This 177-nucleotide RNA was probed chemically with DMS.
RNA sequence: GGGAACGACUCGAGUAGAGUCGAAAAGGAACCGUCGACGAUCCCGGAAUCCAGCCGGAUGCCGGUCCGCUGUCCCAACGAGUCGAACUGCGCCCGAACCCCCGGAACCUCAAUCGUGUGCAUCACGCAAUAUGCGGCAGUUCGCUGCCGCAUAUUGAAAAGAAACAACAACAACAAC
Reactivity to DMS in 0.01 (KOAc 150mM, MgCl2 10mM, bicine 150mM(pH8.5), 24C), signal-to-noise 1, nucleotides 027 to 126: g000g000a100a060c060c030g070u000c030g010a120c070g010a100u010c080c000c000g000g000a140a130u030c070c140a180g010c200c060g010g030a060u000g000c040c010g010g010u000c050c020g010c050u000g000u040c010c020c010a120a150c050g010a060g010u000c020g000a080a150c050u010g000c100g030c020c000c010g020a110a300c010c010c020c000c000g000g010a110a070c050c070u030c050a070a110u010c040g020u010g000u020g050c180a060u010c030a020c090g060
Reactivities are given for positions 27 through 126. The RNA was probed in 150 mM KOAc, 10 mM MgCl2 and 150 mM bicine (pH 8.5) at 24 C. The DMS profile rests on 852 reads. It was measured as part of the RMDB library OK2TST.